The record gives the reactivity of an RNA of 177 nucleotides to 2A3 and DMS.
RNA sequence: GGGAACGACUCGAGUAGAGUCGAAAACUGUAGGAAUUUAUUAUUUGAUGGCGUAACGAUGCUGCAAUGGCGUAAGACAUCUAACAAGAUCAAGUAAAUUAGCGAGCAACGAAUUUUAGCUUAUUGGAGUUGGGAAUUUAUUCGUAAAUUCCCAACUAAAAGAAACAACAACAACAAC
Reactivity to 2A3 in 0.01 (KOAc 150mM, MgCl2 10mM, bicine 150mM(pH8.5), 24C), signal-to-noise 6, nucleotides 027 to 126: c070u100g110u220a140g030g120a090a070u100u100u100a130u120u040a040u030u060u000g010a010u020g000g000c000g000u000a030a010c090g000a000u000g000c000u000g000c020a130a300u270g200g000c020g010u000a000a020g040a000c000a000u000c010u020a050a010c000a010a010g020a020u000c000a000a000g010u020a000a050a040u060u040a030g100c040g030a010g000c010a010a050c050g110a060a060u060u130u140u130a050g010c020u030u050a050u120u240g100g040
Reactivity to DMS in 0.01 (KOAc 150mM, MgCl2 10mM, bicine 150mM(pH8.5), 24C), signal-to-noise 6, nucleotides 027 to 126: c060u000g010u040a100g010g000a090a050u010u010u030a060u000u000a040u000u000u000g000a010u000g000g000c300g000u000a070a110c300g010a020u000g000c000u040g010c000a210a110u030g030g010c020g060u010a010a020g020a100c030a000u000c000u000a200a010c030a030a300g000a010u000c000a010a010g020u000a020a010a090u000u020a110g030c090g000a020g000c070a090a080c140g030a070a030u020u010u000u010a060g010c020u000u010a080u010u000g010g020
Source: RMDB libraries RFM100 and RFMREP, as collected in RNAgym.